[RMDB]
Source information: The data come from the RNA Mapping Database (RMDB), library OK1LIB. This 177-nucleotide RNA was probed chemically with 2A3 and DMS.
RNA sequence: GGGAACGACUCGAGUAGAGUCGAAAACGACAAGAGUGUAAAUGAUAGUAGUUGUGUUACUGACGCACUACCUGCUGGUGGAGUAGCCACCUGUAUAUAACACUGCGUAUACUCACUUUGCUGCUCCCCUGCAGGUGGGAUUCGUCCCACCUGCAGGAAAAGAAACAACAACAACAAC
Reactivity to 2A3 in 0.01 (KOAc 150mM, MgCl2 10mM, bicine 150mM(pH8.5), 24C), signal-to-noise 4, nucleotides 027 to 126: c060g100a030c010a060a040g060a050g080u060g020u160a050a140a180u170g090a100u100a100g020u010a000g020u060u080g010u000g030u070u100a180c140u120g020a020c000g000c010a000c010u020a010c000c030u080g030c060u050g020g040u090g000g020a070g040u110a030g110c000c000a020c000c000u010g050u000a090u000a020u010a060a060c050a020c030u150g010c010g030u010a020u020a060c010u040c080a090c030u010u030u070g000c000u000g000c010u030c000c010
Reactivity to DMS in 0.01 (KOAc 150mM, MgCl2 10mM, bicine 150mM(pH8.5), 24C), signal-to-noise 2, nucleotides 027 to 126: c040g000a210c110a050a070g030a050g000u000g030u010a020a040a100u010g040a100u010a040g020u030a000g000u010u010g050u000g010u000u000a110c080u000g000a030c050g010c030a080c000u010a050c040c020u030g000c030u030g000g040u000g000g020a150g050u000a040g030c000c300a070c230c110u000g050u000a020u010a020u020a020a050c000a050c200u050g000c080g000u010a000u010a040c040u000c020a110c220u000u040u020g080c030u000g000c080u000c020c020